Structure probing data (2A3) for a 207-nucleotide construct.
The RNA was probed in 150 mM KOAc, 10 mM MgCl2 and 150 mM bicine (pH 8.5) at 24 C.
The 2A3 profile rests on 564 reads.
Reactivities are given for positions 27 through 156.
[RMDB]
RNA sequence: GGGAACGACUCGAGUAGAGUCGAAAAAAUUGAUGCAAGGUGUGGAGCGACCUUAAACGGUUCUGGUGGUGCUCUGAAUGGAGUGCUCUACUGAGAUUAUAAAAUAGAAGGUAAGCUAUUAUCUCUUAAAACGCAAUAGAGUUCGCUCUAUUGCGAAUCCUUGGUAGUGGUUCGCCACUACCAAGGAAAAAGAAACAACAACAACAAC
Reactivity to 2A3 in 0.01 (KOAc 150mM, MgCl2 10mM, bicine 150mM(pH8.5), 24C), signal-to-noise 1, nucleotides 027 to 156: a010a040u140u130g010a050u100g040c030a020a030g000g000u020g010u090g060g010a000g020c090g010a020c000c000u030u030a050a120a040c110g110g000u010u030c010u050g010g000u060g030g000u030g000c010u000c010u080g110a080a040u150g020g010a030g000u030g010c000u010c010u040a050c090u140g050a000g000a070u080u070a030u170a090a070a010a020u070a000g070a110a010g050g030u100a070a000g000c010u020a060u060u070a010u050c050u040c000u020u040a140a030a020a030c010g000c010a000a010u000a000g000a000g010u020u080c100g070c040u000c000u010a000u010u000g000c000g000a030a020